[RMDB]
RNA sequence: GGGAACGACUCGAGUAGAGUCGAAAACGACCUGGUGGUGCGCGAUUACGUCUCCAACUACUACCGCCCGCCCAUGCGCGCCAAGGGCUGGGACACCUUCGGGCCGCUGGGGCCGUAUCUGGUGAGCGCAAUGCAAUUGGUUCGCCAAUUGCAUUGCAAAAGAAACAACAACAACAAC
Reactivity to DMS in 0.01 (KOAc 150mM, MgCl2 10mM, bicine 150mM(pH8.5), 24C), signal-to-noise 2, nucleotides 027 to 126: c100g010a120c020c020u020g000g030u000g020g040u010g030c080g020c040g010a060u000u000a070c090g000u020c020u010c030c040a060a070c050u010a090c110u020a080c080c110g000c020c000c010g020c050c020c030a070u000g010c040g030c090g020c040c050a090a120g010g000g020c000u000g010g000g010a130c060a080c070c070u000u010c040g010g000g000c000c070g000c100u000g030g010g010g020c030c040g030u000a020u000c110u000g020g020u020g010a120g010c110
Reactivity to 2A3 in 0.01 (KOAc 150mM, MgCl2 10mM, bicine 150mM(pH8.5), 24C), signal-to-noise 2, nucleotides 027 to 126: c030g050a030c000c000u020g060g000u020g030g060u120g070c080g020c000g080a050u070u150a080c050g040u020c010u000c040c000a030a040c020u190a030c010u060a090c030c010g030c010c010c010g040c000c030c020a090u210g000c050g010c010g020c030c000a030a050g080g010g000c030u090g010g060g020a020c010a050c000c000u060u090c050g060g010g050c010c020g050c070u040g010g030g000g030c020c010g000u010a060u040c090u080g090g000u090g060a070g050c040